[RMDB]
RNA sequence: GGGAACGACUCGAGUAGAGUCGAAAAGCAAGUGGGGACUUGACUUUGGAGUGUAACCAGCAAGUACACACCCUGAAGAAAACGAUGGCUAUAAUCAUGCCCUUCCCAUUACAGGCUCAGUCGGGGAGCUCCUAACAUCGUUCGCGAUGUUAGGAGCAAAAGAAACAACAACAACAAC
Reactivity to DMS in 0.01 (KOAc 150mM, MgCl2 10mM, bicine 150mM(pH8.5), 24C), signal-to-noise 1, nucleotides 027 to 126: g000c000a060a060g050u030g000g000g040g030a110c010u000u000g000a060c010u000u030u020g000g050a090g070u000g020u000a050a090c070c090a190g020c160a140a050g000u000a010c110a010c000a180c020c000c000u000g000a050a110g050a070a060a000a070c100g000a090u040g000g020c040u010a130u000a040a050u040c090a020u010g020c000c000c050u000u000c000c000c000a130u000u030a050c090a110g000g000c000u000c040a070g020u020c000g000g040g030g000a050
Reactivity to 2A3 in 0.01 (KOAc 150mM, MgCl2 10mM, bicine 150mM(pH8.5), 24C), signal-to-noise 3, nucleotides 027 to 126: g010c050a050a040g040u070g040g030g030g000a040c010u060u010g030a120c000u080u090u100g010g040a100g050u080g050u130a020a130c010c020a040g030c030a030a040g050u050a000c050a000c000a010c020c010c000u030g070a060a020g050a040a110a030a010c090g080a090u080g040g030c030u000a050u070a160a110u180c040a020u110g000c000c010c000u040u000c030c000c000a010u010u060a050c040a020g000g060c000u000c020a010g010u090c050g030g000g020g010a000